[RMDB]
RNA sequence: GGGAACGACUCGAGUAGAGUCGAAAAUUUACCUGGCUAGAAGACCUAUUCUGGGCCGCCUUCUGCAAGCAAGUAAGUGCCUCACUAGCCUCUCUCCUUUUUAUAUGGAAAGGUGGAGGCUAGGGGCGAAAUAGUGGCUGUUCGCAGCCACUAUUUCAAAAGAAACAACAACAACAAC
Reactivity to 2A3 in 0.01 (KOAc 150mM, MgCl2 10mM, bicine 150mM(pH8.5), 24C), signal-to-noise 1, nucleotides 027 to 126: u050u030u040a070c010c010u020g040g040c050u060a030g030a030a010g110a220c010c040u080a070u210u110c040u100g010g050g130c080c050g030c040c020u030u010c020u020g100c050a060a110g010c050a060a000g070u130a120a050g050u020g230c000c030u060c000a180c070u010a010g000c090c010u000c010u030c040u070c000c050u000u000u030u010u000a300u060a160u300g060g050a000a000a000g000g000u030g000g000a000g020g070c000u000a000g010g000g000g000c030
Reactivity to DMS in 0.01 (KOAc 150mM, MgCl2 10mM, bicine 150mM(pH8.5), 24C), signal-to-noise 2, nucleotides 027 to 126: u000u010u000a080c030c030u010g010g010c010u010a050g000a040a030g000a070c040c030u000a150u020u010c190u020g000g010g030c040c050g020c170c020u000u000c010u000g020c120a080a090g010c060a070a060g000u010a030a040g020u000g010c000c000u000c080a130c090u000a010g000c010c000u000c000u000c080u000c000c010u010u000u000u010u010a120u010a140u060g010g000a000a010a030g010g020u000g000g000a030g000g000c000u000a000g020g000g010g010c050